[RMDB]
RNA sequence: GGGAACGACUCGAGUAGAGUCGAAAAGUGUCACCGGCCCUGCAUUUUUUUCUUUUUUAAUAAAGACAAAGUCUUGCUGUGUUACCCAGGCUGGCCUCCAGUUCCUGGGGGCUCAAGUGAUCCUCACACCUCAGCCUCCUGAGUAGUUCAGACUACAGUUCCCUUUAAUAUUCGUAUUAAAGGGAACAAAAGAAACAACAACAACAAC
Reactivity to 2A3 in 0.01 (KOAc 150mM, MgCl2 10mM, bicine 150mM(pH8.5), 24C), signal-to-noise 1, nucleotides 027 to 156: g090u090g030u010c030a000c080c000g080g000c050c000c050u050g050c030a060u020u080u060u020u120u180u080c210u300u180u110u080u020u150a190a130u290a120a080a000g010a000c050a100a120a020g030u060c010u080u080g000c000u010g050u070g050u240u220a060c060c000c070a000g080g000c030u020g000g010c050c000u000c000c000a030g020u250u100c000c000u000g000g000g000g000g070c030u030c030a050a050g000u000g050a010u040c000c020u060c010a110c020a020c020c010u050c020a020g020c010c010u050c000c010u130g000a010g050u030a010g010u000u180c120a050g000a070c030u060a020c020a080
Structure probing data (2A3) for a 207-nucleotide construct. It was measured as part of the RMDB library OK3TST. For 2A3 the reverse transcriptase was SuperScript II with manganese.